[RMDB]
RNA sequence: GGGAACGACUCGAGUAGAGUCGAAAAAUGGGGCACACACCCUCCUGCUAUGGGCAGACAUACUUGCACCUCUCACCAGGCCUGGCCCCUCCUGGACCCCCGCAGCCAUUGUUCCCACAGCCGGACGGGCACCUUGAGCUGCGGGCCCAGCCAGGCAGAUUAACUCACUUUUCGAAGUGAGUUAAUCAAAAGAAACAACAACAACAAC
Reactivity to 2A3 in 0.01 (KOAc 150mM, MgCl2 10mM, bicine 150mM(pH8.5), 24C), signal-to-noise 2, nucleotides 027 to 156: a010u070g000g000g000g000c080a060c020a010c020a060c200c020c000u050c010c010u030g010c030u080a100u150g010g040g040c030a020g040a100c040a160u190a070c070u060u090g030c050a150c080c010u050c010u020c010a080c060c030a030g080g000c020c010u030g020g000c000c020c000c000u040c010c000u000g000g000a030c000c020c010c020c000g000c000a000g000c000c000a020u000u010g000u020u040c020c000c000a070c020a050g190c100c060g090g070a110c080g010g020g000c000a010c000c000u040u000g030a050g040c000u000g000c000g000g000g000c010c010c000a010g000c000c000a010g000g000c010a040
Reactivity to DMS in 0.01 (KOAc 150mM, MgCl2 10mM, bicine 150mM(pH8.5), 24C), signal-to-noise 1, nucleotides 027 to 156: a030u010g020g080g030g000c070a110c080a130c090a060c080c020c000u000c010c000u000g020c100u000a120u000g020g000g030c090a050g020a100c100a130u000a120c080u010u010g020c020a110c020c030u000c050u000c050a100c050c000a030g030g040c030c050u000g010g000c090c010c030c030u020c020c050u020g030g020a140c020c070c030c060c040g000c020a080g020c000c020a160u000u000g000u000u020c020c000c000a090c050a090g000c020c000g000g010a070c170g000g010g010c030a000c000c000u000u000g010a100g000c000u010g020c030g000g000g000c030c000c050a130g010c020c000a060g000g060c070a110